Structure probing data (DMS) for a 177-nucleotide construct. For DMS the reverse transcriptase was MarathonRT. Conditions: 150 mM KOAc, 10 mM MgCl2 and 150 mM bicine (pH 8.5), 24 C. The data come from the RNA Mapping Database (RMDB), library TTRINS.
[RMDB]
RNA sequence: GGGAACGACUCGAGUAGAGUCGAAAAGAUAUGGACCUUAUCGGAGGAAUCGUUCCAGACAUGCUCCGUGGUCGGAAACGACCAUAGGAGCAACAGCUGGACGAUUCCUCCGAUAAGGUCCUAAGUCCACCAUGAUAUGGUUCGCCAUAUCAUGGUGAAAAGAAACAACAACAACAAC
Reactivity to DMS in 0.01 (KOAc 150mM, MgCl2 10mM, bicine 150mM(pH8.5), 24C), signal-to-noise 1, nucleotides 027 to 126: g010a110u010a300u000g010g020a010c000c000u000u010a000u000c010g010g010a060g010g000a000a010u010c000g000u000u010c000c000a010g000a020c040a200u010g020c020u010c000c000g010u000g010g010u000c000g030g010a110a080a270c010g020a020c010c000a020u010a100g070g000a010g060c000a010a020c140a160g010c000u000g010g010a000c000g000a030u000u000c000c010u000c010c000g010a000u000a010a000g000g010u000c000c010u000a000a090g000u000c030